[RMDB]
RNA sequence: GGGAACGACUCGAGUAGAGUCGAAAAGCCAGCGCCUGCCCGGCAGGCCGCCGGAGACGAUCACAUAGGACUGGGCCUGCCGGAUCAUCUGCUGCACCGUGUGGUCGAUCCGGCUGAGCACGGCGUAGCAUAGUGCUGCAUUCGUGCAGCACUAUGCAAAAGAAACAACAACAACAAC
Reactivity to 2A3 in 0.01 (KOAc 150mM, MgCl2 10mM, bicine 150mM(pH8.5), 24C), signal-to-noise 2, nucleotides 027 to 126: g060c010c020a030g010c060g080c030c030u050g000c040c050c000g030g000c010a000g000g000c000c020g020c010c000g050g010a060g030a090c090g030a080u180c070a060c100a240u220a120g090g110a080c100u090g080g000g000c000c000u000g000c020c000g000g010a010u010c000a020u000c020u160g010c010u040g000c010a030c040c040g040u030g010u020g000g080u030c050g000a080u030c030c000g070g000c070u090g060a010g020c010a020c030g000g000c020g020u030a020
Reactivity to DMS in 0.01 (KOAc 150mM, MgCl2 10mM, bicine 150mM(pH8.5), 24C), signal-to-noise 3, nucleotides 027 to 126: g010c040c020a070g010c060g020c030c060u010g000c260c040c010g000g010c010a020g000g020c010c020g020c020c010g020g010a070g020a110c140g000a130u020c100a100c140a130u000a150g020g010a090c080u000g020g010g000c010c000u000g000c020c010g000g000a000u000c040a080u000c130u000g010c030u000g010c030a040c020c000g000u000g030u000g000g030u000c030g000a190u000c000c000g010g000c010u000g000a150g000c000a020c020g010g020c040g010u000a060
This 177-nucleotide RNA was probed chemically with 2A3 and DMS. It was measured as part of the RMDB library OK2TRN. The RNA was probed in 150 mM KOAc, 10 mM MgCl2 and 150 mM bicine (pH 8.5) at 24 C. Values cover nucleotides 27 to 126. The 2A3 profile rests on 3,388 reads. Reactivities are rounded to 0.1 and cut off at 0 and 3. For DMS the reverse transcriptase was MarathonRT.